About this RNA
An RNA of 207 nucleotides, treated with DMS and 2A3 and read out base by base. The 2A3 profile rests on 505 reads. For 2A3 the reverse transcriptase was SuperScript II with manganese. The DMS profile rests on 1,978 reads. Values cover nucleotides 27 to 156. The reactions ran in a buffer of 150 mM KOAc, 10 mM MgCl2 and 150 mM bicine (pH 8.5), at 24 C.
[RMDB]
RNA sequence: GGGAACGACUCGAGUAGAGUCGAAAACGGAACCGCUCUGAAACGGCUCUCUCAGUGAGAGUAGGUUUGUCAGUUCUGCCGAAGAAACAGGAAGCCUGGGGCUUUGAUAUUGAUGUUGAUGUGACCCCAAGGCAGGUUCACAUGUACAACAUACUCAUAUCCCGUAUCGAUUCGUCGAUACGGGAUAAAAAGAAACAACAACAACAAC
Reactivity to DMS in 0.01 (KOAc 150mM, MgCl2 10mM, bicine 150mM(pH8.5), 24C), signal-to-noise 1, nucleotides 027 to 156: c060g010g000a080a040c030c020g020c050u010c070u000g020a050a080a050c040g000g070c000u010c000u010c040u010c140a170g080u000g010a070g030a030g050u010a040g000g010u000u010u010g010u010c000a060g000u000u000c030u030g010c030c080g000a100a080g000a200a060a080c030a060g030g000a060a140g000c080c000u000g020g020g000g030c120u000u000u000g020a150u000a050u000u000g020a100u000g030u000u010g020a130u010g000u010g010a060c000c000c000c020a090a160g050g020c030a030g200g010u000u000c000a070c030a110u010g000u010a080c010a020a100c030a300u010a130c010u020c040a250
Reactivity to 2A3 in 0.01 (KOAc 150mM, MgCl2 10mM, bicine 150mM(pH8.5), 24C), signal-to-noise 1, nucleotides 027 to 156: c040g030g010a010a000c040c000g040c080u000c040u070g070a050a060a050c040g000g090c030u010c000u010c010u030c070a140g000u110g220a010g020a020g020u070a060g020g180u030u050u100g160u060c050a100g010u080u000c040u040g050c010c000g120a130a100g030a100a090a010c000a000g000g120a040a030g020c020c010u030g000g000g000g000c000u040u150u210g060a050u100a120u130u210g040a050u040g000u030u000g030a010u060g080u020g190a190c000c000c010c060a060a100g080g000c030a010g000g000u030u020c030a030c000a080u140g130u230a010c000a000a000c000a060u140a050c050u110c170a010